[RMDB]
Chemical mapping of a 207-nucleotide RNA with 2A3 and DMS.

RNA sequence: GGGAACGACUCGAGUAGAGUCGAAAAAGCAUACCAGCUCGUACGCGAGCUGGUAUGCAAAAAUUGGUGUAGCCUUACCGUAGUAGGCACAAAAACGUCAGCUGGAUCUACGUAUCCAGCUGACGAAAAAAGUGUUUUGUGUUCGCACAAAACACAAGUGUAAAACAUACUUCGGUAUGUUUUACACAAAAGAAACAACAACAACAAC
Reactivity to 2A3 in 0.01 (KOAc 150mM, MgCl2 10mM, bicine 150mM(pH8.5), 24C), signal-to-noise 2, nucleotides 027 to 156: a000g000c000a000u020a000c000c010a070g000c010u000c010g050u040a070c230g000c010g160a000g010c000u010g000g000u000a000u000g030c000a010a020a000a000a000u050u100g030g000u070g090u180a000g000c000c010u000u000a010c020c050g040u000a000g010u010a000g020g010c000a000c030a040a020a020a000a000c000g000u000c000a000g010c000u000g000g000a010u020c040u170a130c130g090u190a030u000c000c000a000g010c000u000g000a000c000g000a010a000a000a000a000a000g000u000g000u000u010u010u000g000u000g020u010u000c040g040c070a010c000a000a000a010a000c010a000c010a050a030
Reactivity to DMS in 0.01 (KOAc 150mM, MgCl2 10mM, bicine 150mM(pH8.5), 24C), signal-to-noise 1, nucleotides 027 to 156: a150g030c020a020u000a000c010c000a000g040c030u000c010g080u010a120c290g060c020g040a020g050c010u010g010g000u000a000u000g000c020a000a020a020a090a150u000u010g000g020u000g000u010a120g000c010c010u000u000a150c070c060g010u020a190g010u000a020g020g060c030a110c100a000a050a020a120a060c010g010u020c000a020g000c000u010g020g000a010u020c040u000a120c280g000u000a050u020c000c000a000g010c000u000g000a040c010g000a000a000a070a080a030a090g040u000g000u000u000u000u050g000u000g000u010u000c300g000c040a000c020a000a010a010a000c000a020c000a030a110
The DMS profile rests on 2,216 reads. Source: RMDB library M2RFPK, as collected in RNAgym. For DMS the reverse transcriptase was MarathonRT.